[RMDB]
RNA sequence: GGGAACGACUCGAGUAGAGUCGAAAAUACGCGUCCAGCUGCGUCUGCAGGUCCACCGUUUCUCUGCGCAGCCGCUCCACCUCUUCCGUCUUUUCAUGAAUCACAGCGUCGUAGCACUGGAGAAGCGCGAUAAUUUAUCAUUCGUGAUAAAUUAUCGAAAAGAAACAACAACAACAAC
Reactivity to 2A3 in 0.01 (KOAc 150mM, MgCl2 10mM, bicine 150mM(pH8.5), 24C), signal-to-noise 9, nucleotides 027 to 126: u140a010c040g010c010g040u010c020c010a030g010c030u030g010c010g050u050c060u090g040c050a030g010g060u040c030c010a050c030c060g020u020u090u030c050u000c010u030g010c040g000c030a020g010c010c010g010c010u020c000c000a050c010c010u030c000u050u020c020c010g060u030c050u040u090u040u060c080a100u120g140a130a060u090c030a040c010a090g020c010g040u030c010g020u060a010g010c040a020c090u030g040g020a060g030a100a020g030c040g000
Reactivity to DMS in 0.01 (KOAc 150mM, MgCl2 10mM, bicine 150mM(pH8.5), 24C), signal-to-noise 9, nucleotides 027 to 126: u030a070c060g000c030g010u010c020c020a080g010c040u010g010c040g010u010c060u020g020c050a060g000g010u010c040c050a080c090c050g020u010u010u010c020u010c040u010g020c070g010c060a090g010c040c050g000c030u010c020c020a060c050c030u000c030u000u010c020c020g010u000c020u010u010u010u010c060a080u010g010a090a080u010c050a060c090a070g020c040g010u010c040g010u000a090g010c040a070c060u010g010g010a070g000a060a070g010c080g010
This 177-nucleotide RNA was probed chemically with 2A3 and DMS. DMS adducts were read by reverse transcription with MarathonRT. The data come from the RNA Mapping Database (RMDB), library OK1LIB. Reactivities are given for positions 27 through 126.